[RMDB]
RNA sequence: GGGAACGACUCGAGUAGAGUCGAAAAGAUAUGGAGUCCGGUGGCAAGGCUAACCAUCGGAAACGAUGGAGCUGAUGACCCACCGACUCCUAAGUCAAAACGGUUUGAUGCUUCGGCAUCAAACCGAGUGGGAAGGGAGGUUCGCCUCCCUUCCCACAAAAGAAACAACAACAACAAC
Reactivity to 2A3 in 0.01 (KOAc 150mM, MgCl2 10mM, bicine 150mM(pH8.5), 24C), signal-to-noise 1, nucleotides 027 to 126: g030a040u160a120u170g050g050a000g040u110c300c170g100g000u010g040g100c180a240a190g040g050c070u060a200a180c020c000a000u000c040g060g020a000a000a070c020g000a000u000g000g020a030g000c000u060g060a300u240g070a130c020c050c000a000c020c000g000a000c000u030c000c010u010a020a010g010u000c110a000a000a000a270c080g010g000u000u020u000g000a000u000g010c020u040u090c300g140g030c010a000u000c000a000a010a000c010c020g010a020